[RMDB]
RNA sequence: GGGAACGACUCGAGUAGAGUCGAAAAGAAAGAAAGAAAAGUCUCCUACCUUGCGCGCUAAUCAGUGACCGGGGCUGGUUUUUGCAACAGUCAGGUACCUGAAGUAGCGCGCGUGGUGGCAGACAAAUGUUAGAGCUUUAUUCGUAAAGCUCUAACAAAAAGAAACAACAACAACAAC
Reactivity to 2A3 in 0.01 (KOAc 150mM, MgCl2 10mM, bicine 150mM(pH8.5), 24C), signal-to-noise 9, nucleotides 027 to 126: g130a020a050a010g120a040a090a010g100a020a100a000a010g000u010c000u010c010c000u020a030c000c000u070u250g000c000g000c000g000c000u010a010a020u030c010a010g020u010g110a010c000c010g270g110g010g010c030u030g020g130u040u050u040u180u300g090c100a080a040c000a030g000u010c000a000g020g010u050a140c000c000u010g010a070a020g040u010a000g000c000g000c000g000c000g000u000g000g000u000g000g000c020a000g000a000c010a000a070a010
Reactivity to DMS in 0.01 (KOAc 150mM, MgCl2 10mM, bicine 150mM(pH8.5), 24C), signal-to-noise 5, nucleotides 027 to 126: g000a090a080a100g010a080a070a100g000a080a060a100a120g000u000c010u000c300c000u000a030c010c010u000u000g020c010g030c010g020c000u000a060a020u000c000a000g010u000g010a010c000c000g020g060g000g000c000u000g000g010u000u010u050u050u030g000c210a050a070c000a010g000u000c000a120g000g020u010a010c030c000u000g000a020a090g010u000a000g000c000g000c000g020c010g010u000g010g020u000g000g010c220a000g000a010c000a030a070a060

An RNA of 177 nucleotides, treated with 2A3 and DMS and read out base by base. As a SHAPE reagent, 2A3 marks flexible, mostly unpaired nucleotides at the ribose 2'-OH. The reactions ran in a buffer of 150 mM KOAc, 10 mM MgCl2 and 150 mM bicine (pH 8.5), at 24 C. 2A3 adducts were read by reverse transcription with SuperScript II with manganese. It was measured as part of the RMDB libraries RFM100 and RFMREP. DMS adducts were read by reverse transcription with MarathonRT.